[RMDB]
RNA sequence: GGGAACGACUCGAGUAGAGUCGAAAAUCGCAGUUGGCGAAGCACGUCGAUCCGUUCGACCUUCCCCAGAAUACCGUUCGAUAUUUGGGGAAGUACACCACAAUGCUGACCCAGGUGUCGUCGCUGGCUAGCUCACGGCGUUCGCGCCGUGAGCUAGAAAAGAAACAACAACAACAAC
Reactivity to 2A3 in 0.01 (KOAc 150mM, MgCl2 10mM, bicine 150mM(pH8.5), 24C), signal-to-noise 1, nucleotides 027 to 126: u080c000g000c010a020g090u250u100g020g000c030g000a000a000g010c090a020c040g040u040c000g070a080u080c120c090g100u120u040c000g000a000c000c000u000u000c000c030c000c000a010g070a060a090u150a050c000c000g190u170u190c010g110a050u020a030u010u000u030g010g000g000g000a000a000g060u010a000c000a010c060c000a120c000a010a040u190g000c040u000g090a120c000c040c000a000g000g020u000g060u050c000g000u000c020g000c110u110g000g030

An RNA of 177 nucleotides, treated with 2A3 and read out base by base. The RNA was probed in 150 mM KOAc, 10 mM MgCl2 and 150 mM bicine (pH 8.5) at 24 C. The data come from the RNA Mapping Database (RMDB), library OK1LIB. Values cover nucleotides 27 to 126. For 2A3, 485 sequencing reads were counted.